[RMDB]
RNA sequence: GGGAACGACUCGAGUAGAGUCGAAAAGGAUGAUGCGGUGGUCGUAGGUGGAGGUCAAAGUGAUCAAUUUGCCGAUGCCCAGCUCGGCGAUGCGUUCCUCGCUGGCGCCUUGAAACUCGGCGGGGUAGAGUCAUUUCAUAUUCGUAUGAAAUGACUCAAAAGAAACAACAACAACAAC
Reactivity to DMS in 0.01 (KOAc 150mM, MgCl2 10mM, bicine 150mM(pH8.5), 24C), signal-to-noise 9, nucleotides 027 to 126: g010g010a080u010g000a090u000g010c070g010g020u010g010g010u000c070g020u010a050g010g010u000g010g010a130g010g010u000c070a060a070a090g010u000g000a070u000c090a060a150u000u000u000g020c010c010g000a060u000g010c030c040c030a130g010c270u000c020g010g010c020g000a030u000g000c170g010u000u010c010c010u000c050g010c020u000g010g010c120g010c030c070u000u010g000a110a080a130c110u000c040g000g020c020g010g000g000g010u010a130
Reactivity to 2A3 in 0.01 (KOAc 150mM, MgCl2 10mM, bicine 150mM(pH8.5), 24C), signal-to-noise 4, nucleotides 027 to 126: g070g010a080u100g010a040u100g040c040g020g040u060g010g030u050c050g030u040a040g000g060u050g030g050a040g020g000u060c030a080a050a070g090u090g060a070u090c040a070a100u050u050u160g000c000c000g000a010u080g000c000c060c000a030g020c020u020c000g000g010c020g010a030u070g020c020g020u040u040c010c010u000c020g000c010u020g030g000c050g010c030c000u030u130g080a060a040a020c050u040c040g010g010c020g000g020g000g000u030a050